[RMDB]
RNA sequence: GGGAACGACUCGAGUAGAGUCGAAAACAAAUACCGUUCGCGGUAUUUGAAAUACGGAAACCUUCGUGCCGUCACAAGUUAAGAGGUGCUUGCUCUCGUUAAAAAUCAGCUGAUUCGUCAGCUGAAACAAGUAGAAAAGAUUCGUCUUUUCUACUUGAAAAGAAACAACAACAACAAC
Reactivity to DMS in 0.01 (KOAc 150mM, MgCl2 10mM, bicine 150mM(pH8.5), 24C), signal-to-noise 9, nucleotides 027 to 126: c000a010a010a010u000a000c000c000g030u000u010c200g030c000g010g010u000a000u000u000u000g000a050a080a090u010a100c090g000g010a080a080a070c040c040u000u010c070g010u000g010c020c020g010u010c130a070c100a070a080g010u000u010a080a090g010a070g000g010u000g010c060u000u000g010c060u000c020u000c040g010u000u010a020a050a070a100a090u000c000a000g010c000u000g000a030u000u010c180g010u000c000a000g000c000u000g000a010a040a090
Reactivity to 2A3 in 0.01 (KOAc 150mM, MgCl2 10mM, bicine 150mM(pH8.5), 24C), signal-to-noise 7, nucleotides 027 to 126: c000a000a000a000u000a000c000c010g010u030u050c250g000c000g110g000u000a000u000u010u000g010a020a010a010u200a020c040g020g040a060a090a040c020c000u060u090c060g050u060g040c020c000g050u080c030a030c020a110a110g040u140u140a150a030g060a030g060g040u030g050c040u030u070g010c010u000c010u020c040g100u070u100a080a110a010a020a080u030c000a000g000c000u000g000a020u020u040c080g080u010c060a000g000c000u000g000a010a000a000
This 177-nucleotide RNA was probed chemically with DMS and 2A3. The RNA was probed in 150 mM KOAc, 10 mM MgCl2 and 150 mM bicine (pH 8.5) at 24 C. For 2A3 the reverse transcriptase was SuperScript II with manganese.